[RMDB]
RNA sequence: GGGAACGACUCGAGUAGAGUCGAAAAGGGUUACAGCGGUUGCCGCAGGUCUAAUCGGCGUUGACCAACUGUACGACGUAUCUCGUGCAACACGUGGUGUACGUGCAGCAGCGAAUGCCACAGAGGUUGAGAGCCGCGCAUUAGGUUCGGCAACUGAAAUAGUGACUGGUUUCGACCAGUCACUAUUAAAAGAAACAACAACAACAAC
Reactivity to DMS in 0.01 (KOAc 150mM, MgCl2 10mM, bicine 150mM(pH8.5), 24C), signal-to-noise 1, nucleotides 027 to 156: g000g000g070u000u010a090c040a130g000c010g000g010u010u000g010c010c070g000c250a050g070g020u000c020u000a040a040u000c060g010g000c010g020u000u010g000a050c050c000a090a070c100u010g000u000a060c030g030a040c060g030u000a070u010c050u000c020g060u000g040c050a040a110c070a070c030g000u020g000g000u010g000u000a080c010g040u000g030c030a270g010c120a300g050c010g000a060a010u000g010c010c000a080c050a070g010a150g020g010u000u000g000a040g010a160g020c000c040g000c190g000c180a140u000u000a060g030g000u000u010c020g000g000c000a030a050c020u000g010a040
Reactivity to 2A3 in 0.01 (KOAc 150mM, MgCl2 10mM, bicine 150mM(pH8.5), 24C), signal-to-noise 2, nucleotides 027 to 156: g100g000g050u190u110a040c060a090g090c040g020g000u000u000g000c010c010g030c130a040g050g080u000c010u020a000a010u120c020g050g010c010g040u110u180g010a030c000c030a060a030c060u050g020u010a010c030g030a010c120g140u120a080u050c010u000c030g000u000g000c010a080a080c020a060c190g020u010g030g020u090g040u110a010c000g040u060g030c120a130g060c040a020g030c080g070a040a000u080g000c020c000a020c000a020g110a060g070g010u010u020g080a060g010a020g070c000c000g000c000g010c010a000u000u030a020g020g000u070u130c010g000g020c010a000a010c000u000g010a020

An RNA of 207 nucleotides, treated with DMS and 2A3 and read out base by base.
Conditions: 150 mM KOAc, 10 mM MgCl2 and 150 mM bicine (pH 8.5), 24 C.
The data come from the RNA Mapping Database (RMDB), library OK3TST.
For DMS, 2,355 sequencing reads were counted.
For 2A3, 1,428 sequencing reads were counted.